[RMDB]
RNA sequence: GGGAACGACUCGAGUAGAGUCGAAAAAAUGCCGUCUUUCCUUCUGGCAAUGCCUCAGUACGCGCACUUUCAGGUACCUCCUUAGCAUACUCAUCAGGAAUUUUAUUUAAAGGCCAAAUUCUUGGCACAGUACGGAAGUAUUCGUACUUCCGUACUGAAAAGAAACAACAACAACAAC
Reactivity to DMS in 0.01 (KOAc 150mM, MgCl2 10mM, bicine 150mM(pH8.5), 24C), signal-to-noise 5, nucleotides 027 to 126: a060a090u010g010c040c020g010u010c070u000u000u000c030c010u000u020c060u000g010g000c050a120a080u000g010c040c010u010c060a070g020u000a070c120g010c100g010c070a050c050u010u000u010c080a060g000g010u010a070c050c030u000c040c010u000u000a070g020c040a090u000a060c040u000c050a070u010c070a050g000g030a040a030u010u010u010u000a070u000u020u010a060a050a220g010g010c030c030a040a050a140u010u010c090u000u010g000g010c110a110
Reactivity to 2A3 in 0.01 (KOAc 150mM, MgCl2 10mM, bicine 150mM(pH8.5), 24C), signal-to-noise 4, nucleotides 027 to 126: a000a020u120g010c020c000g060u040c040u030u060u030c030c000u050u090c040u050g020g010c050a050a080u080g030c010c000u010c040a020g040u070a030c050g000c010g020c070a020c070u040u090u090c040a010g070g000u050a080c010c010u030c010c000u050u070a030g020c000a020u040a110c020u020c080a080u010c010a050g000g070a070a030u110u070u050u040a200u070u160u140a090a090a010g120g000c010c000a000a040a090u230u060c120u020u020g010g030c020a010

An RNA of 177 nucleotides, treated with DMS and 2A3 and read out base by base. Reactivities are rounded to 0.1 and cut off at 0 and 3. The RNA was probed in 150 mM KOAc, 10 mM MgCl2 and 150 mM bicine (pH 8.5) at 24 C. For DMS, 4,947 sequencing reads were counted.